RNA sequence: GGGAACGACUCGAGUAGAGUCGAAAACAUCAGGAGGACCUUCCGCGCACUUCCAAGCAGGAGCUUUCCUUCCAAGCGCACUUCCAAUCUACUCGAGAGGAGGAGGAGGAGGAGCAUUCCCACAAAAGCACUAUUUAUCUUUCGAGAUAAAUAGUGCAAAAGAAACAACAACAACAAC
Reactivity to DMS in 0.01 (KOAc 150mM, MgCl2 10mM, bicine 150mM(pH8.5), 24C), signal-to-noise 5, nucleotides 027 to 126: c090a080u010c150a150g010g010a060g010g010a080c300c040u000u010c020c020g000c070g010c050a110c090u010u010c100c090a070a100g000c030a090g000g000a050g010c070u000u030u000c010c010u010u010c020c050a110a090g000c070g020c090a070c070u000u000c010c010a110a170u000c010u000a030c040u000c010g010a090g010a160g010g000a060g000g000a060g010g000a140g000g000a060g010g000a070g010c030a160u000u000c000c000c000a120c250a050a050a100a100
Reactivity to 2A3 in 0.01 (KOAc 150mM, MgCl2 10mM, bicine 150mM(pH8.5), 24C), signal-to-noise 5, nucleotides 027 to 126: c030a070u160c070a030g010g010a010g000g020a030c000c010u070u020c030c020g020c020g010c080a080c090u250u080c080c030a060a030g020c010a020g030g010a020g010c030u100u150u040c000c000u080u040c010c010a060a020g070c040g000c060a040c040u030u000c000c000a030a090u010c010u050a040c020u030c030g080a100g030a060g230g070a020g010g020a060g020g030a030g010g010a020g020g000a010g010c010a060u030u000c000c030c000a050c040a020a090a010a020